The data come from the RNA Mapping Database (RMDB), library RFM100.
Chemical mapping of a 177-nucleotide RNA with DMS and 2A3.
The 2A3 profile rests on 1,291 reads.
For DMS, 1,443 sequencing reads were counted.
The reactions ran in a buffer of 150 mM KOAc, 10 mM MgCl2 and 150 mM bicine (pH 8.5), at 24 C.
RNA sequence: GGGAACGACUCGAGUAGAGUCGAAAAGUCACAUCCCAAGUCUUGCGCGCUUCGGCAGUCAAAUCUACCCUUCGCCUUCUACGUCUGCGUCAUCGUGUGUUUGCCUUCGGGGUCUAUGGCGCCGCUGAAUCACCGGCCUAUUCGUAGGCCGGUGAUUAAAAGAAACAACAACAACAAC
Reactivity to DMS in 0.01 (KOAc 150mM, MgCl2 10mM, bicine 150mM(pH8.5), 24C), signal-to-noise 1, nucleotides 027 to 126: g030u020c080a080c170a160u010c030c000c000a120a210g000u020c060u000u000g030c160g030c040g030c100u020u040c040g000g000c000a030g000u030c070a100a080a170u000c180u000a080c010c040c010u000u000c150g000c020c030u020u010c020u020a110c070g040u070c000u000g000c150g000u060c000a050u030c100g010u020g030u000g000u000u000u010g010c000c000u010u020c060g030g000g020g000u000c050u000a100u000g000g010c070g000c010c020g010c110u000g030
Reactivity to 2A3 in 0.01 (KOAc 150mM, MgCl2 10mM, bicine 150mM(pH8.5), 24C), signal-to-noise 3, nucleotides 027 to 126: g120u060c050a010c000a170u050c000c000c000a000a010g040u020c040u070u110g010c060g000c000g010c000u040u010c070g020g020c010a000g020u040c010a060a050a110u060c020u040a050c010c000c000u030u100c030g030c030c000u060u060c060u090a040c030g100u010c030u050g010c020g060u050c000a030u010c050g050u030g000u010g050u080u080u130g060c020c000u000u050c040g070g000g000g030u010c000u040a100u110g030g000c010g000c010c000g060c040u060g050